[RMDB]
RNA sequence: GGGAACGACUCGAGUAGAGUCGAAAAAAUAUCUUUCAGGAAGUAAACACAUCAGGAGCGAUAGCGGUGAAUUAUUCGUGGUUUUGUCGAUUCGGCAUAGUGGCGAUAACUGAAUGCCGGAUCGGUAGAUAGCACUAUCCUUCGGGAUAGUGCUAUCAAAAGAAACAACAACAACAAC
Reactivity to 2A3 in 0.01 (KOAc 150mM, MgCl2 10mM, bicine 150mM(pH8.5), 24C), signal-to-noise 1, nucleotides 027 to 126: a000a000u070a010u010c040u000u060u050c000a020g000g040a010a000g000u130a070a080a040c050a000c000a070u050c030a050g000g120a090g080c030g040a030u070a090g020c010g060g000u030g050a090a100u240u030a090u130u060c010g040u090g040g060u060u000u050u200g020u000c000g000a000u000u000c010g000g000c020a020u000a030g060u040g050g110c080g120a060u060a090a010c010u020g150a110a030u000g060c000c000g000g000a000u000c000g000g000u020a030
Reactivity to DMS in 0.01 (KOAc 150mM, MgCl2 10mM, bicine 150mM(pH8.5), 24C), signal-to-noise 1, nucleotides 027 to 126: a100a050u010a040u010c010u000u000u010c060a100g010g020a110a040g020u000a080a070a100c100a070c060a080u000c070a060g000g000a080g040c010g020a050u000a040g040c060g020g030u010g000a090a110u000u000a060u010u000c080g010u000g010g020u000u010u000u000g010u000c000g000a020u010u000c020g020g020c010a010u000a030g030u010g010g010c090g020a080u030a100a090c030u010g000a110a050u000g010c020c020g020g000a010u000c000g010g010u000a030